[RMDB]
RNA sequence: GGGAACGACUCGAGUAGAGUCGAAAACAGAUAAGAAAAGACCGAGAGGUUCAAGCUUAUAGGGCAGAAAGCGGGGGACAGCAGUACUAAACAUUCCCUGUGGCUGAGACGAAGGUUGUACUCCAACAAAACGAGUACUAGUUCGCUAGUACUCGAACUUAGAAUAGAACUUCGGUUCUAUUCUAAGAAAAGAAACAACAACAACAAC
Reactivity to 2A3 in 0.01 (KOAc 150mM, MgCl2 10mM, bicine 150mM(pH8.5), 24C), signal-to-noise 2, nucleotides 027 to 156: c020a000g090a110u190a160a020g030a060a160a030a000g030a030c040c020g030a030g020a070g090g080u090u100c040a010a010g000c000u090u050a020u070a230g010g000g070c020a050g080a090a060a010g020c060g000g000g000g040g020a030c030a020g000c010a020g030u090a050c050u130a110a030a030c020a030u040u060c000c000c010u020g020u020g020g050c070u030g010a000g010a080c080g050a030a040g020g000u000u010g000u020a050c020u050c120c040a030a020c030a040a120a030a050c020g000a000g000u000a000c000u000a010g000u000u000c110g000c080u010a000g000u000a000c030u010c000g000a010a000
Reactivity to DMS in 0.01 (KOAc 150mM, MgCl2 10mM, bicine 150mM(pH8.5), 24C), signal-to-noise 1, nucleotides 027 to 156: c050a220g000a210u000a050a170g020a070a020a300a150g000a040c050c010g040a150g010a160g000g000u000u000c040a070a230g010c030u020u000a050u010a050g030g000g020c020a080g000a020a060a090g000c010g050g000g000g050g010a110c050a030g000c030a100g010u040a160c030u000a020a050a040c050a120u020u000c000c000c010u000g070u010g000g030c000u000g000a160g040a110c040g000a110a090g020g000u030u000g060u000a030c060u010c020c000a060a120c090a040a080a120a180c040g000a010g010u020a000c000u010a090g020u000u000c300g010c020u000a030g000u000a000c040u000c000g000a000a000